[RMDB]
RNA sequence: GGGAACGACUCGAGUAGAGUCGAAAAACGCUAGCAAGAGCCUGUUGCUCGACGAACUCAUGACGAUCGGAAACGUGCUCUUCAUGGCUCGUGCCGACAACGUAUUCUUCGUCCCGGUACCGAAGCCUCCGGUGACUACUCACCUGGUACGCAAGCAAUCCAACGGAAGAUUCGUCUUCCGUUGGAUAAAAGAAACAACAACAACAAC
Reactivity to DMS in 0.01 (KOAc 150mM, MgCl2 10mM, bicine 150mM(pH8.5), 24C), signal-to-noise 1, nucleotides 027 to 156: a050c100g010c010u000a040g010c030a120a200g010a110g050c050c050u000g020u000u000g020c030u000c050g070a070c010g020a140a080c060u000c070a080u000g000a130c070g000a120u000c040g010g000a090a050a070c040g010u000g020c000u000c130u020u010c090a070u000g020g000c000u000c050g020u000g010c000c020g040a090c100a030a050c000g000u000a110u050u000c110u010u000c020g020u000c040c080c020g000g030u000a070c100c060g000a080a090g000c060c000u000c000c030g000g000u010g010a050c090u010a120c080u000c010a040c000c000u000g050g000u000a110c050g060c020a090a050g040c030a150
Reactivity to 2A3 in 0.01 (KOAc 150mM, MgCl2 10mM, bicine 150mM(pH8.5), 24C), signal-to-noise 3, nucleotides 027 to 156: a000c030g000c030u020a030g010c010a040a020g000a000g030c010c040u070g010u050u090g010c120u030c030g050a010c010g010a080a030c020u090c240a110u150g080a040c050g140a220u010c000g020g020a050a070a000c010g030u050g000c000u000c000u150u070c050a070u160g010g000c000u020c010g020u030g000c000c010g060a080c050a120a030c020g050u060a170u200u250c070u150u110c030g010u000c020c050c000g000g010u030a060c110c000g070a120a000g020c010c010u020c040c000g010g000u030g050a070c080u110a020c030u190c030a020c010c000u040g050g030u060a040c080g000c050a060a040g020c000a040
The data come from the RNA Mapping Database (RMDB), library OK3TST. Chemical mapping of a 207-nucleotide RNA with DMS and 2A3. For 2A3, 1,873 sequencing reads were counted. Reactivities are given for positions 27 through 156. Values are in units of 0.01, from 0 to 300, in steps of 10. The reactions ran in a buffer of 150 mM KOAc, 10 mM MgCl2 and 150 mM bicine (pH 8.5), at 24 C.